An RNA of 177 nucleotides, treated with DMS and 2A3 and read out base by base.
RNA sequence: GGGAACGACUCGAGUAGAGUCGAAAAGCAAGGGCGAUGCGGUAGAUAUCGCCGUCGAUCCCAUCGAAGGCACCCGCAUGACGGCGAUGGGCCAGGCCAACGCCCUGGCGGUGAUGGCGGUCGGCGAUCCUGGAUUUAUGUUCGCAUAAAUCCAGGAAAAAGAAACAACAACAACAAC
Reactivity to DMS in 0.01 (KOAc 150mM, MgCl2 10mM, bicine 150mM(pH8.5), 24C), signal-to-noise 5, nucleotides 027 to 126: g030c130a090a060g000g010g010c020g030a080u030g020c030g010g000u030a070g020a140u020a050u010c010g000c030c000g020u000c000g010a070u010c010c000c020a070u010c030g020a110a100g000g000c070a070c080c010c010g040c050a130u030g020a100c180g020g040c020g020a060u000g010g000g000c030c040a140g010g010c030c020a070a070c080g030c030c010c010u000g000g000c010g000g000u020g000a030u010g000g000c120g020g000u000c020g010g010c020g000a100
Reactivity to 2A3 in 0.01 (KOAc 150mM, MgCl2 10mM, bicine 150mM(pH8.5), 24C), signal-to-noise 2, nucleotides 027 to 126: g070c060a060a060g050g010g010c010g030a020u030g040c040g050g040u080a050g090a190u180a050u140c010g020c010c000g000u000c000g010a010u010c020c000c010a010u040c060g110a140a110g080g000c070a150c040c000c000g010c040a080u210g070a070c100g060g010c020g000a030u070g000g040g000c040c030a070g000g050c030c010a050a010c060g000c000c010c000u020g020g000c030g030g010u130g010a020u030g010g060c140g010g000u020c010g000g000c000g000a010
Reactivities are given for positions 27 through 126. 2A3 is a SHAPE reagent: it acylates the 2'-hydroxyl of flexible nucleotides of all four kinds. For DMS, 11,921 sequencing reads were counted. Source: RMDB library OK1LIB, as collected in RNAgym.